Annotation: This 177-nucleotide RNA was probed chemically with 2A3 and DMS. Reactivities are rounded to 0.1 and cut off at 0 and 3. For DMS the reverse transcriptase was MarathonRT. It was measured as part of the RMDB library TTRDEL.

RNA sequence: GGGAACGACUCGAGUAGAGUCGAAAAGAUAUGGACAGGCGUGUGAGCGCAGAUAUCGGAAACGAUGUAGCUCCACGAACUACCUGUCCUAAGUCAAAACUCAGUUAAUCUUCGGAUUAACUGAGAAGAAGUACCGUUUGUUCGCAAACGGUACUUCAAAAGAAACAACAACAACAAC
Reactivity to 2A3 in 0.01 (KOAc 150mM, MgCl2 10mM, bicine 150mM(pH8.5), 24C), signal-to-noise 1, nucleotides 027 to 126: g030a030u080a040u110g030g010a030c000a010g000g020c000g020u000g090u170g020a010g000c020g080c110a030g140a280u190a010u060c000g020g020a030a050a030c020g010a000u000g000u070a040g010c000u000c000c000a010c000g010a010a010c010u120a040c000c020u000g000u020c000c000u010a050a030g020u010c030a000a000a020a150c010u020c000a010g000u020u010a000a000u010c020u010u150c300g120g000a000u000u000a010a000c000u030g020a000g000a000a030
Reactivity to DMS in 0.01 (KOAc 150mM, MgCl2 10mM, bicine 150mM(pH8.5), 24C), signal-to-noise 1, nucleotides 027 to 126: g000a010u000a300u000g000g000a050c030a010g000g010c000g030u000g020u020g020a000g060c000g020c290a120g010a070u020a020u000c010g000g010a070a070a220c010g000a000u000g030u030a290g000c010u000c000c000a010c040g000a030a050c150u000a300c020c010u000g000u000c000c000u000a010a030g000u000c030a080a110a100a200c000u000c000a010g000u000u000a000a000u000c000u000u010c290g010g000a030u010u010a000a010c010u010g000a000g000a060a030